[RMDB]
RNA sequence: GGGAACGACUCGAGUAGAGUCGAAAAGAUAUGGAAUGGCUAGGGAGCUAUGUCGGAAACGAUGCAUAGCAUCGAUCUAGAUCAUUCCUAAGUCAAAGCAGGAUCGGGGUUCGCCCCGAUCCUGCAAUCAUUAACCCUCCUUCGGGAGGGUUAAUGAAAAAGAAACAACAACAACAAC
Reactivity to DMS in 0.01 (KOAc 150mM, MgCl2 10mM, bicine 150mM(pH8.5), 24C), signal-to-noise 1, nucleotides 027 to 126: g030a060u020a290u010g030g020a000a030u000g010g000c010u000a010g000g030g020a050g020c020u000a010u010g000u010c030g020g000a130a110a080c030g010a120u010g000c070a000u000a010g020c030a300u000c150g000a050u020c010u020a010g010a050u000c000a010u000u000c000c000u000a030a100g010u000c030a090a160a110g000c020a010g010g000a030u000c020g000g000g010g050u000u010c220g010c000c000c000c040g010a010u000c000c010u000g030c000a000a030